[RMDB]
RNA sequence: GGGAACGACUCGAGUAGAGUCGAAAAGAUAUGGAUGACUUGUCAGCUCGAAUCAGCGAAGAACCAUUUCUAUCGGAAACGAUAGAAAUGGGGAGCUGAUAGAGCUUGGAUUUAGUCAUCCUAAGUCGAAAACGUUUUAGUUCGCUAAAACGUUUUCAAAAGAAACAACAACAACAAC
Reactivity to DMS in 0.01 (KOAc 150mM, MgCl2 10mM, bicine 150mM(pH8.5), 24C), signal-to-noise 2, nucleotides 027 to 126: g000a150u020a300u000g030g000a030u000g010a020c000u000u000g000u000c020a060g010c010u010c000g000a160a160u000c000a000g020c020g000a090a230g010a170a230c010c000a030u000u000u000c000u000a030u000c000g030g000a160a110a200c000g030a020u000a000g000a000a000a000u000g000g000g000g000a060g040c000u000g000a010u000a190g000a040g000c000u000u000g020g000a010u010u010u000a000g010u000c010a000u000c020c000u000a020a140g020u010c060

Structure probing data (DMS) for a 177-nucleotide construct. The reactions ran in a buffer of 150 mM KOAc, 10 mM MgCl2 and 150 mM bicine (pH 8.5), at 24 C. It was measured as part of the RMDB library TTRINS. The DMS profile rests on 1,476 reads.